[RMDB]
RNA sequence: GGGAACGACUCGAGUAGAGUCGAAAAGUGAGUACGAGAGUACGAUCUCGAGUGAGUGUUCUCGUGUGAACGAUCGUACACGUGUGAGAUCUCUCGUGUACACGUACACGUGAGAGUGAUCGUUCGUGAGUGUGUACACGAACUCGUGAACGUGUUCCGUGCACUCUGUAUUCGUACAGAGUGCACGAAAAGAAACAACAACAACAAC
Reactivity to 2A3 in 0.01 (KOAc 150mM, MgCl2 10mM, bicine 150mM(pH8.5), 24C), signal-to-noise 6, nucleotides 027 to 156: g110u100g050a030g040u070a050c080g010a030g000a000g130u020a000c050g010a120u010c010u010c000g010a010g020u020g010a020g000u010g030u080u060c030u040c070g040u070g040u050g030a020a000c010g010a010u000c020g090u190a070c140a060c120g140u200g050u140g130a120g050a210u030c020u000c000u010c030g000u010g010u010a010c110a020c130g070u030a000c000a000c000g000u020g000a020g000a010g000u090g020a020u010c000g010u020u000c000g010u030g040a070g020u230g010u050g020u060a000c010a000c010g010a020a000c000u000c000g000u020g000a010a010c010g000u010g000u030u030c010
Reactivity to DMS in 0.01 (KOAc 150mM, MgCl2 10mM, bicine 150mM(pH8.5), 24C), signal-to-noise 2, nucleotides 027 to 156: g010u010g020a260g040u000a040c030g010a230g040a190g030u010a020c030g010a110u000c000u000c020g010a130g000u010g010a300g010u000g010u010u010c000u000c010g020u000g000u000g000a040a010c020g000a050u000c010g030u010a130c030a050c050g000u000g010u010g000a090g010a140u000c050u010c000u000c030g050u000g040u000a030c020a090c230g030u050a070c000a020c010g000u000g000a040g030a070g010u000g010a090u000c000g010u000u000c020g050u000g000a100g000u000g030u000g030u000a040c000a090c020g010a180a060c020u010c020g000u010g000a040a060c040g000u000g000u000u000c000